Record summary
An RNA of 177 nucleotides, treated with DMS and 2A3 and read out base by base.
[RMDB]
RNA sequence: GGGAACGACUCGAGUAGAGUCGAAAAUGGCAUCCUUCCGGCACAAUGCACAAAUCUGUCUAUGCUUCCAGCUGCAGCUACAUGUCCCUGCAACCUGCAUAUUUGCAUAGUCCAGGCACUCUGCAAGCCUCAACGACUAAUUCGUUAGUCGUUGAGGAAAAGAAACAACAACAACAAC
Reactivity to DMS in 0.01 (KOAc 150mM, MgCl2 10mM, bicine 150mM(pH8.5), 24C), signal-to-noise 3, nucleotides 027 to 126: u020g010g020c040a070u000c020c020u000u000c040c020g000g010c060a090c080a070a060u000g000c040a050c120a040a100a100u000c060u000g010u030c040u000a070u010g020c040u000u000c080c060a070g020c100u010g010c050a050g010c070u000a060c090a050u000g000u000c030c010c000u000g000c060a060a060c160c040u000g010c000a020u000a080u010u000u000g020c020a020u010a040g010u010c080c040a110g010g020c080a060c030u010c020u000g020c070a040a100g020
Reactivity to 2A3 in 0.01 (KOAc 150mM, MgCl2 10mM, bicine 150mM(pH8.5), 24C), signal-to-noise 3, nucleotides 027 to 126: u040g030g010c020a050u050c010c000u040u050c040c000g010g020c020a010c020a040a110u140g000c050a020c040a090a080a040u020c020u070g040u030c030u080a080u090g030c010u090u010c030c030a040g000c040u020g040c010a030g000c010u060a020c030a110u090g040u060c000c010c000u000g030c010a040a090c020c010u020g050c060a030u070a150u150u070u030g020c010a020u010a040g000u000c030c030a030g080g000c020a020c030u030c010u040g000c020a040a050g040
Description
The 2A3 profile rests on 4,403 reads. DMS adducts were read by reverse transcription with MarathonRT. The reactions ran in a buffer of 150 mM KOAc, 10 mM MgCl2 and 150 mM bicine (pH 8.5), at 24 C. As a SHAPE reagent, 2A3 marks flexible, mostly unpaired nucleotides at the ribose 2'-OH.